[RMDB]
Notes: Chemical mapping of a 177-nucleotide RNA with 2A3 and DMS.

RNA sequence: GGGAACGACUCGAGUAGAGUCGAAAAAUGCGGGUACAUACCUCUCCUUUUAUACCAACACCAGUUAUAAGAACUGGUGGCUUACUGAGUUAAGUUUUGAAUCUUAACCGUUCGGCCUACGAAGCUUACAAACCGAUAGAUUCGUCUAUCGGUUUGUAAAAGAAACAACAACAACAAC
Reactivity to 2A3 in 0.01 (KOAc 150mM, MgCl2 10mM, bicine 150mM(pH8.5), 24C), signal-to-noise 6, nucleotides 027 to 126: a000u120g010c070g010g010g010u100a080c040a110u180a090c050c030u040c030u050c010c000u070u030u090u090a180u120a140c040c070a140a030c020a010c000c000a010g010u040u040a190u080a300a110g170a080a000c000u000g000g000u010g020g010c010u050u040a040c030u100g040a030g200u020u000a010a030g030u040u040u200u170g120a080a060u030c000u000u010a010a010c000c000g040u030u060c050g020g010c010c000u020a050c070g050a090a020g030c040u000u010
Reactivity to DMS in 0.01 (KOAc 150mM, MgCl2 10mM, bicine 150mM(pH8.5), 24C), signal-to-noise 2, nucleotides 027 to 126: a030u000g020c210g000g010g000u000a100c070a160u020a080c040c000u000c010u000c020c010u000u010u020u060a130u010a110c010c030a090a090c060a040c000c000a030g000u000u000a050u070a180a180g030a060a000c000u000g030g000u020g000g010c060u000u040a070c150u010g010a160g000u000u000a010a030g000u020u060u050u060g000a040a060u010c010u000u000a130a000c060c000g080u020u000c060g020g000c000c020u010a020c080g020a020a030g030c000u000u000
For 2A3 the reverse transcriptase was SuperScript II with manganese.